Source information: Chemical mapping of a 177-nucleotide RNA with DMS and 2A3. DMS adducts were read by reverse transcription with MarathonRT. It was measured as part of the RMDB library OK2TST. Conditions: 150 mM KOAc, 10 mM MgCl2 and 150 mM bicine (pH 8.5), 24 C.

RNA sequence: GGGAACGACUCGAGUAGAGUCGAAAAAUCUACUGUGCUCGGUGCUAGUGCGCAGUCCAUCGCAUUGGCCUCCUCUAUACAAGUGGGAGCGGCGCGUAGUGUGGUCGUGGGAGCCACUCAUGCUCUGUGUUAGUUGCACUUUCGAGUGCAACUAACAAAAAGAAACAACAACAACAAC
Reactivity to DMS in 0.01 (KOAc 150mM, MgCl2 10mM, bicine 150mM(pH8.5), 24C), signal-to-noise 2, nucleotides 027 to 126: a090u000c000u000a080c030u050g040u010g020c030u020c080g040g040u010g030c010u000a030g000u000g030c040g000c150a120g010u000c040c030a110u000c010g050c000a090u000u010g000g010c020c030u000c030c000u010c050u010a070u010a140c270a080a090g020u020g030g010g030a040g000c120g040g000c110g000c050g000u010a010g010u000g010u000g010g010u000c040g000u010g000g020g010a150g020c050c060a080c050u010c110a070u010g010c050u000c010u000g010
Reactivity to 2A3 in 0.01 (KOAc 150mM, MgCl2 10mM, bicine 150mM(pH8.5), 24C), signal-to-noise 1, nucleotides 027 to 126: a000u000c020u010a030c000u120g000u000g080c050u030c080g160g040u120g030c000u010a020g010u010g030c000g050c020a050g040u000c020c010a090u070c020g040c020a010u020u090g000g000c000c030u010c010c000u040c030u090a140u020a220c130a180a010g040u110g050g000g020a030g030c050g000g000c010g000c000g040u000a070g030u030g010u010g050g040u030c010g100u200g020g050g060a010g010c010c050a060c030u060c020a040u210g060c020u010c020u010g180